Conditions: 150 mM KOAc, 10 mM MgCl2 and 150 mM bicine (pH 8.5), 24 C. An RNA of 207 nucleotides, treated with DMS and 2A3 and read out base by base. The 2A3 profile rests on 5,835 reads. 2A3 adducts were read by reverse transcription with SuperScript II with manganese. Values cover nucleotides 27 to 156.
[RMDB]
RNA sequence: GGGAACGACUCGAGUAGAGUCGAAAAAUAGGACUACAGACCUAUGUAAUGAACUAAAUGGAAAAAUAAUCAAUGUAUACAAUCAAGAUGUGAUCCAGCAGUAUACACCACCAAACCACUUUAAUUGUCGUUCUCAGUGGCUUCCAGUCUCCAAGUAACAAUGUAUCCAAUUCGUUGGAUACAUUGUAAAAGAAACAACAACAACAAC
Reactivity to DMS in 0.01 (KOAc 150mM, MgCl2 10mM, bicine 150mM(pH8.5), 24C), signal-to-noise 3, nucleotides 027 to 156: a080u000a030g000g050a160c030u000a130c090a150g010a150c010c000u000a020u010g000u000a060a100u010g000a090a160c060u000a080a060a080u010g020g000a020a070a100a100a060u010a060a080u010c050a070a040u000g010u000a040u000a050c040a060a130u000c070a060a130g010a090u010g010u010g010a100u000c040c010a090g000c060a110g010u000a000u000a030c000a020c040c030a100c040c040a040a090a100c020c010a050c020u000u000u000a080a100u000u000g010u000c000g010u010u000c010u010c020a090g030u000g020g000c020u000u000c070c060a110g000u000c010u000c030c030a010a060g020u000a080
Reactivity to 2A3 in 0.01 (KOAc 150mM, MgCl2 10mM, bicine 150mM(pH8.5), 24C), signal-to-noise 8, nucleotides 027 to 156: a000u030a010g010g030a030c040u130a070c230a060g090a070c010c000u010a020u050g060u100a120a180u130g060a040a040c060u090a120a060a140u100g010g030a080a060a020a050a070u220a040a030u130c050a030a060u090g020u030a030u030a070c050a040a090u130c040a070a060g050a190u110g070u080g080a020u070c040c020a020g020c020a010g050u020a000u010a020c020a010c020c030a030c020c040a060a040a050c000c020a030c020u160u150u190a110a160u220u160g010u010c020g000u010u010c010u000c000a010g010u010g010g000c020u080u000c020c000a020g040u020c000u010c060c010a050a020g020u030a020